[RMDB]
RNA sequence: GGGAACGACUCGAGUAGAGUCGAAAAACUUUAAGUCGCAUUCAUGGAAGUGUCAAAGGCAUGUACGCCUGGAUCGGUGAACUUUCUGAGAAUUGCUUAACCGAACCAAAAAGGUAUUCUAAUCAAAACGGAUAUCCUCAUUCGUGAGGAUAUCCGUAAAAGAAACAACAACAACAAC
Reactivity to 2A3 in 0.01 (KOAc 150mM, MgCl2 10mM, bicine 150mM(pH8.5), 24C), signal-to-noise 2, nucleotides 027 to 126: a000c120u240u190u160a140a000g000u130c040g000c010a020u000u070c010a020u170g080g000a010a010g060u010g010u020c140a240a000a060g020g020c040a050u300g080u120a070c050g000c000c000u000g020g010a000u000c000g020g080u060g000a000a000c000u000u020u030c000u000g080a070g010a160a060u000u030g030c000u030u160a030a020c000c000g000a010a080c000c000a060a020a020a030a020g130g000u120a170u000u050c020u020a120a180u040c050a000a000a000
Reactivity to DMS in 0.01 (KOAc 150mM, MgCl2 10mM, bicine 150mM(pH8.5), 24C), signal-to-noise 1, nucleotides 027 to 126: a040c030u000u080u000a000a080g000u030c060g000c030a000u020u000c120a040u000g030g000a010a020g000u020g010u010c110a170a020a030g000g000c010a110u000g060u020a240c220g000c000c000u000g030g000a000u000c000g020g010u030g000a120a030c030u000u000u000c000u000g000a190g000a180a000u000u000g000c020u000u030a300a100c000c000g000a050a260c040c000a120a110a140a100a000g010g000u080a000u000u020c030u000a040a060u090c230a050a100a030
Annotation:
The record gives the reactivity of an RNA of 177 nucleotides to 2A3 and DMS. The 2A3 profile rests on 650 reads. The data come from the RNA Mapping Database (RMDB), library OK1LIB. For DMS, 1,181 sequencing reads were counted. The reactions ran in a buffer of 150 mM KOAc, 10 mM MgCl2 and 150 mM bicine (pH 8.5), at 24 C.